Source information: Source: RMDB library OK2TRN, as collected in RNAgym. This 177-nucleotide RNA was probed chemically with DMS and 2A3. The reactions ran in a buffer of 150 mM KOAc, 10 mM MgCl2 and 150 mM bicine (pH 8.5), at 24 C.
[RMDB]
RNA sequence: GGGAACGACUCGAGUAGAGUCGAAAAGCAAGCACGGUGUCUGCUUCCAACCGAACGCUCAGGGCAGCGACUACCUAUGCAGGUGUCAUCCGGGUUACACUGGAAAGUGGUGCGAGUACCUCACCAGAUUCUAAGCUGUAUUCGUACAGCUUAGAAUAAAAGAAACAACAACAACAAC
Reactivity to DMS in 0.01 (KOAc 150mM, MgCl2 10mM, bicine 150mM(pH8.5), 24C), signal-to-noise 9, nucleotides 027 to 126: g020c100a060a090g010c040a080c120g010g010u000g000u000c040u000g010c030u000u000c040c060a100a160c080c040g010a080a110c140g010c040u000c070a110g010g000g020c090a060g010c070g010a070c060u000a050c030c020u000a110u000g010c140a050g010g010u000g010u000c050a110u000c040c030g010g000g010u000u010a090c100a130c020u000g000g010a050a090a080g020u000g000g010u000g010c100g010a120g010u000a070c060c020u000c040a070c040c040a110g000
Reactivity to 2A3 in 0.01 (KOAc 150mM, MgCl2 10mM, bicine 150mM(pH8.5), 24C), signal-to-noise 6, nucleotides 027 to 126: g030c030a040a030g020c020a020c100g060g030u070g020u030c040u050g010c000u070u000c020c020a070a080c050c020g080a090a040c060g010c040u040c070a080g030g060g000c030a030g030c020g050a040c020u160a040c030c010u090a100u260g100c100a020g030g030u010g030u050c020a060u030c010c010g000g000g040u060u050a040c080a020c030u030g030g080a090a050a040g090u070g040g020u030g010c010g020a040g040u050a070c000c020u030c010a060c020c000a020g010